[RMDB]
RNA sequence: GGGAACGACUCGAGUAGAGUCGAAAACUCGCCCGCGUCGACAAUCUCGCAGGCCCGGACCUCGCUGACGAGUUCCCCUUCGAGGUGCAGCUCGGCGGCGAGGUCGUCACUGUCCGGGGGAUCAACGGCGCGUCGUCACCACAGACGUUUACGGUCGACGCGCACGGAGAUUCGUCUCCGUGCGCGUAAAAGAAACAACAACAACAAC
Reactivity to 2A3 in 0.01 (KOAc 150mM, MgCl2 10mM, bicine 150mM(pH8.5), 24C), signal-to-noise 2, nucleotides 027 to 156: c030u040c020g010c000c000c000g000c010g030u000c000g000a120c100a040a070u000c010u040c040g200c110a160g030g010c030c060c080g120g000a010c000c000u000c000g000c000u000g000a010c000g000a000g020u000u030c000c010c040c000u150u160c150g140a300g050g000u000g000c060a000g000c010u000c000g000g000c000g010g000c000g000a010g000g000u000c000g000u000c000a010c080u070g020u070c020c000g080g000g000g000g020a010u030c120a120a090c050g000g000c000g000c000g030u040c000g010u000c010a090c190c040a090c060a120g040a030c000g060u150u100u150a090c070g000g010u040c040g030
Structure probing data (2A3) for a 207-nucleotide construct. The reactions ran in a buffer of 150 mM KOAc, 10 mM MgCl2 and 150 mM bicine (pH 8.5), at 24 C. Source: RMDB library OK3TST, as collected in RNAgym.